RNA sequence: GGGAACGACUCGAGUAGAGUCGAAAAAUAGGCUUAUCAAGAGAGGUGGAGGGACUGGCACGAUGAAACCCGGCAGCCAGAAAUGGUGCCCAUUCCUGCAGCGGAAACGUUGAAAGAUGAGCCGAUGUGCCCGUCUGGUUCGCCAGACGGAAAAGAAACAACAACAACAAC
Reactivity to DMS in 0.01 (KOAc 150mM, MgCl2 10mM, bicine 150mM(pH8.5), 24C), signal-to-noise 2, nucleotides 027 to 129: a030u040a090g000g000c040u000u000a000u040c030a150a130g000a030g030a110g090g040u040g000g000a110g000g000g000a060c060u030g050g050c000a010c030g030a080u030g040a070a120a110c090c050c060g030g000c060a000g000c030c000a050g020a080a090a090u040g000g050u030g020c000c000c000a100u080u030c030c010u000g020c040a000g040c040g020g020a110a060a080c060g030u060u000g000a060a090a090g010a020u040g020a040g020c020c030g000a070u000g030u010g000c060
Reactivity to 2A3 in 0.01 (KOAc 150mM, MgCl2 10mM, bicine 150mM(pH8.5), 24C), signal-to-noise 5, nucleotides 027 to 129: a000u140a020g010g000c000u030u020a020u050c030a100a030g160a010g000a030g130g100u050g030g070a090g020g030g000a030c010u010g020g000c010a000c030g090a080u130g110a040a020a040c000c020c000g000g030c010a020g050c010c000a000g030a030a060a010u140g030g000u080g010c000c010c000a000u050u010c000c000u060g010c000a000g000c000g000g000a060a040a030c010g020u020u040g040a100a040a010g020a000u010g000a000g010c010c000g010a050u080g010u040g040c000